[RMDB]
RNA sequence: GGGAACGACUCGAGUAGAGUCGAAAACUUGACGACGUGAUCUUGCUGUCGUAAUAAAAUUCUGUACAUAAAAGUCGACAGGGAACCAAGCAGGCCCAUACACGUCAAACCAGGGAUAAAAUAAAAAGAUACUGAUACUGUUCGCAGUAUCAGUAUCAAAAGAAACAACAACAACAAC
Reactivity to DMS in 0.01 (KOAc 150mM, MgCl2 10mM, bicine 150mM(pH8.5), 24C), signal-to-noise 4, nucleotides 027 to 126: c030u000u010g010a090c110g000a050c010g000u000g010a180u010c040u000u010g020c020u000g000u010c030g000u010a130a040u020a060a050a060a090u040u020c100u030g000u030a090c090a060u030a040a080a120a170g020u010c020g000a020c000a010g030g000g010a110a160c300c020a020a010g010c100a080g000g010c080c020c020a100u010a100c020a050c010g000u000c010a110a090a150c100c050a060g010g000g000a140u060a000a050a070a110u050a050a100a090a070a110
Reactivity to 2A3 in 0.01 (KOAc 150mM, MgCl2 10mM, bicine 150mM(pH8.5), 24C), signal-to-noise 7, nucleotides 027 to 126: c020u040u110g070a040c030g010a010c010g030u020g060a100u060c030u080u100g060c020u050g020u040c040g020u020a040a110u110a040a110a030a010u170u070c060u060g150u100a050c030a040u230a160a140a020a040g120u080c040g020a010c010a010g000g040g020a030a040c050c000a030a010g080c010a030g050g020c020c000c000a010u050a030c030a010c010g020u010c000a040a000a070c050c020a040g000g020g080a050u140a110a120a020a010u250a050a060a030a030a000